[RMDB]
An RNA of 207 nucleotides, treated with 2A3 and read out base by base. Conditions: 150 mM KOAc, 10 mM MgCl2 and 150 mM bicine (pH 8.5), 24 C. Values cover nucleotides 27 to 156.
RNA sequence: GGGAACGACUCGAGUAGAGUCGAAAACACAGGAUCGUGUGGAAGUCCUGCUCGGGGCGGAAGCAUUAAAACCAUUCGAACUAGUCAAUGCGUGGCGUGUCUCUCCGCAGCGUGUUGGCGAAUGUAACAAGCUGCCUCUCGUUCGCGAGAGGCAGAAGUCAUGUUUAUGCUUCGGCAUAAACAUGACAAAAGAAACAACAACAACAAC
Reactivity to 2A3 in 0.01 (KOAc 150mM, MgCl2 10mM, bicine 150mM(pH8.5), 24C), signal-to-noise 2, nucleotides 027 to 156: c040a000c000a020g150g110a250u200c100g000u000g000u020g020g040a090a070g010u000c010c030u020g060c090u030c050g000g000g010g000c050g020g010a000a000g080c040a020u020u250a010a020a000a040c020c010a020u090u110c090g060a110a100c030u050a060g030u030c000a000a000u000g000c010g020u020g060g000c000g020u040g140u030c050u010c030u050c150c000g000c010a020g010c000g000u000g030u000u000g000g050c010g000a020a010u040g030u070a060a160c050a140a010g010c000u000g020c000c000u000c000u000c000g000u000u020c190g010c000g070a000g000a000g020g020c000a000g000a020a000